An RNA of 177 nucleotides, treated with DMS and 2A3 and read out base by base.
RNA sequence: GGGAACGACUCGAGUAGAGUCGAAAACUGUGGUGAGUCCCUAUCUAGUAUAGCAAUCCACCAAGCAGGUGAUUUCACACAAUUCAGGUUCUCAGAGAAAAUGCGCCCUGACUUGACAGGUAUGGUCCAUAAUGCCGAUGUUCGCAUCGGCAUUAUGAAAAGAAACAACAACAACAAC
Reactivity to DMS in 0.01 (KOAc 150mM, MgCl2 10mM, bicine 150mM(pH8.5), 24C), signal-to-noise 5, nucleotides 027 to 126: c050u010g000u010g000g000u000g000a080g000u020c110c290c010u000a040u020c040u020a070g010u030a100u010a030g040c170a070a080u030c060c030a040c030c020a100a080g020c170a030g010g020u030g000a080u020u010u010c030a040c060a100c100a050a100u020u010c030a100g000g000u000u020c010u000c010a060g010a110g000a060a020a040a080u010g010c090g000c250c010c020u010g010a080c060u010u010g000a070c050a040g020g000u010a070u020g020g010u010c080
Reactivity to 2A3 in 0.01 (KOAc 150mM, MgCl2 10mM, bicine 150mM(pH8.5), 24C), signal-to-noise 6, nucleotides 027 to 126: c040u050g010u070g020g050u040g060a050g050u070c030c010c000u010a060u030c030u040a040g120u090a050u030a060g040c040a040a080u020c020c000a000c020c000a050a040g080c020a030g030g060u060g050a090u020u130u120c020a030c000a000c000a030a040u060u040c040a030g070g000u070u030c040u020c010a040g070a010g070a110a080a030a050u140g010c050g040c010c000c010u040g040a120c010u070u120g020a030c010a030g000g060u090a090u110g060g010u030c030

2A3 adducts were read by reverse transcription with SuperScript II with manganese.
Conditions: 150 mM KOAc, 10 mM MgCl2 and 150 mM bicine (pH 8.5), 24 C.